[RMDB]
RNA sequence: GGGAACGACUCGAGUAGAGUCGAAAAUCGCCCUCGCGGCGUAAGUUCACCUCAGCCAUCUGAAGAGGCCGUCAGACCGGGAACUGUUCUCUACCCGGAGCCUGGCGUCAGUGAGAGAACUCGCUUCUGCGUUGAGUAUCAGGGCGCAGAGGGACUUCCGUUACCUAUAGUUCGCUAUAGGUAACGGAAAAGAAACAACAACAACAAC
Reactivity to 2A3 in 0.01 (KOAc 150mM, MgCl2 10mM, bicine 150mM(pH8.5), 24C), signal-to-noise 1, nucleotides 027 to 156: u060c000g000c010c000c000u160c150g070c240g010g000c060g000u050a050a030g040u070u050c090a220c100c000u010c020a000g020c000c040a250u130c120u110g110a150a120g020a100g000g020c000c000g020u000c000a010g020a070c000c000g040g000g000a020a000c050u150g040u030u000c020u030c000u000a030c000c000c000g020g000a020g110c020c000u000g020g020c000g020u050c040a060g070u140g140a080g000a000g000a000a000c000u000c090g020c000u020u000c000u000g000c000g020u000u030g020a020g100u100a090u300c140a110g010g000g000c000g000c010a000g000a010g000g000g010a000c010u000u000
Source information:
Source: RMDB library RSTRND, as collected in RNAgym. The record gives the reactivity of an RNA of 207 nucleotides to 2A3. Values are in units of 0.01, from 0 to 300, in steps of 10. The 2A3 profile rests on 771 reads. 2A3 adducts were read by reverse transcription with SuperScript II with manganese. 2A3 is a SHAPE reagent: it acylates the 2'-hydroxyl of flexible nucleotides of all four kinds. The RNA was probed in 150 mM KOAc, 10 mM MgCl2 and 150 mM bicine (pH 8.5) at 24 C.